[RMDB]
RNA sequence: GGGAACGACUCGAGUAGAGUCGAAAAGAUAUGGAUCCCUUCAAGCUUGGACCCUGUGGAUCGGAAACGAUCCCAGGCUAGCUUGGAGGGAUCCUAAGUCAAAGGCCGUUACUUCGGUAACGGCCAAGUUGACUCUUAGGUUCGCCUAAGAGUCAACAAAAGAAACAACAACAACAAC
Reactivity to DMS in 0.01 (KOAc 150mM, MgCl2 10mM, bicine 150mM(pH8.5), 24C), signal-to-noise 3, nucleotides 027 to 126: g010a060u000a300u000g010g010a000u000c000c000c000u000u000c000a010a000g010c010u010u010g050g010a110c300c010c000u010g010u010g030g000a010u010c000g000g000a080a100a170c000g010a010u000c010c010c010a000g000g030c010u000a000g020c000u000u000g000g000a010g000g000g000a000u000c000c000u000a010a100g020u010c010a100a120a140g010g030c000c000g000u000u000a010c000u000u010c250g010g000u010a010a010c010g000g000c000c000a010a010

Background:
Structure probing data (DMS) for a 177-nucleotide construct. It was measured as part of the RMDB library TTRDES. The DMS profile rests on 3,327 reads. Values cover nucleotides 27 to 126.